Annotation:
The data come from the RNA Mapping Database (RMDB), library OK3TST. Structure probing data (2A3) for a 207-nucleotide construct. Reactivities are rounded to 0.1 and cut off at 0 and 3. Conditions: 150 mM KOAc, 10 mM MgCl2 and 150 mM bicine (pH 8.5), 24 C.

[RMDB]
RNA sequence: GGGAACGACUCGAGUAGAGUCGAAAAAUGGUGGCAAAGCAGUGUCAAAAAAUGGGCCUGAAAAUGCUUGUGCUUGCCCGACAGGGUGAGAUCGUCGAUCAGGAUAGUGAGGAGAUCGACAACUUCGGGGUAACGAACUCCAUCUUCUCAGCAUCGCCACAACAGGCGUCUUCGGACGCCUGUUGUGAAAAGAAACAACAACAACAAC
Reactivity to 2A3 in 0.01 (KOAc 150mM, MgCl2 10mM, bicine 150mM(pH8.5), 24C), signal-to-noise 1, nucleotides 027 to 156: a010u050g100g000u010g010g030c010a050a030a030g110c030a100g000u080g070u070c080a060a190a020a000a000a220u170g010g000g020c000c000u020g020a040a060a000a020u300g030c040u080u030g030u030g070c000u030u030g040c010c010c000g020a100c120a120g000g020g060u100g040a050g020a100u200c080g010u000c000g010a060u000c000a000g270g010a090u080a130g120u080g040a080g000g060a030g000a010u070c060g020a020c010a040a050c080u110u080c080g000g000g000g030u100a080a040c070g060a030a030c000u000c010c000a040u040c000u010u000c030u000c000a030g000c010a080u100c020g050c120